An RNA of 177 nucleotides, treated with 2A3 and DMS and read out base by base.
Conditions: 150 mM KOAc, 10 mM MgCl2 and 150 mM bicine (pH 8.5), 24 C.
For 2A3 the reverse transcriptase was SuperScript II with manganese.
The data come from the RNA Mapping Database (RMDB), library OK1LIB.
[RMDB]
RNA sequence: GGGAACGACUCGAGUAGAGUCGAAAACUCGGUGAUCACGGCACCGUCCGCGCCGGUGACAAUGUACGGUUCCCCGAUCGGCCGGCAGCCCUGCGACACCACGGAAACGCUGUGCGCGCCGGGCAGGCACACCAGUGGCGUUCGCGCCACUGGUGUGAAAAGAAACAACAACAACAAC
Reactivity to 2A3 in 0.01 (KOAc 150mM, MgCl2 10mM, bicine 150mM(pH8.5), 24C), signal-to-noise 3, nucleotides 027 to 126: c020u010c010g000g040u020g010a030u110c080a080c070g080g000c030a000c040c020g040u010c000c010g070c040g000c000c000g070g040u000g010a080c060a080a200u240g070u150a090c040g070g020u030u030c030c000c000c000g060a050u090c000g060g000c000c000g000g000c000a020g030c010c000c000u000g000c000g020a010c000a030c050c050a040c030g030g030a090a090a050c030g010c090u030g020u030g000c160g010c000g000c140c000g000g000g000c020a030g050g000
Reactivity to DMS in 0.01 (KOAc 150mM, MgCl2 10mM, bicine 150mM(pH8.5), 24C), signal-to-noise 1, nucleotides 027 to 126: c000u000c000g000g070u000g000a050u010c070a070c070g000g010c010a090c110c060g030u050c000c040g010c080g140c010c000g000g000u010g000a000c110a030a050u060g040u110a150c240g010g010u020u000c030c000c040c000g000a000u000c070g070g000c000c000g000g030c130a160g000c000c010c000u000g000c000g000a250c000a020c040c170a060c000g000g010a120a030a020c070g040c180u000g050u000g010c060g060c050g000c070c140g030g000g000c030a020g010g000